[RMDB]
RNA sequence: GGGAACGACUCGAGUAGAGUCGAAAAAGCACUGGUACGAUACGUCCUACCAGUGCAGUCGUUGGGAUGGAACGCAAUUAAAUACAUGUGUGACGUGUAUUUGCGAACGACGUAAUUAUUUUUCAAAAUCACGCUAUCGUGUUCGCACGAUAGCGAACUGAAAAAAUAUGUUCGCAUAUUUUUUCAGAAAAGAAACAACAACAACAAC
Reactivity to 2A3 in 0.01 (KOAc 150mM, MgCl2 10mM, bicine 150mM(pH8.5), 24C), signal-to-noise 6, nucleotides 027 to 156: a000g000c000a000c000u010g000g010u010a010c030g010a040u010a080c130g090u040c000c000u000a000c000c000a000g000u000g000c010a000g010u000c010g010u020u040g110g030g060a150u120g050g060a110a030c020g000c020a010a030u170u120a110a070a020u030a010c010a010u020g080u030g160u200g230a090c020g000u010g000u010a000u000u020u040g010c010g000a020a010c010g020a010c020g050u040a080a080u120u160a120u050u160u030u030u070c080a090a080a010a090u160c050a020c070g000c000u000a000u000c000g000u000g010u040u040c110g020c060a000c000g000a000u000a000g000c000g000a010a010
Reactivity to DMS in 0.01 (KOAc 150mM, MgCl2 10mM, bicine 150mM(pH8.5), 24C), signal-to-noise 2, nucleotides 027 to 156: a140g030c000a010c000u000g010g020u000a020c080g010a170u000a110c190g020u000c020c020u000a040c000c000a020g040u010g060c000a020g020u000c020g010u000u010g000g000g010a140u000g010g010a070a170c020g000c020a100a140u000u000a050a050a030u000a020c010a020u010g010u010g010u000g000a120c040g060u000g010u000a030u000u000u000g010c070g020a050a090c020g010a130c030g060u000a060a110u000u000a150u000u000u000u010u000c030a030a060a080a120u010c090a190c010g000c010u000a010u000c000g040u000g010u000u010c250g040c010a010c000g020a040u010a010g030c000g020a000a010
The record gives the reactivity of an RNA of 207 nucleotides to 2A3 and DMS. For 2A3 the reverse transcriptase was SuperScript II with manganese. The DMS profile rests on 7,270 reads. The data come from the RNA Mapping Database (RMDB), library M2RFPK. DMS adducts were read by reverse transcription with MarathonRT. The RNA was probed in 150 mM KOAc, 10 mM MgCl2 and 150 mM bicine (pH 8.5) at 24 C.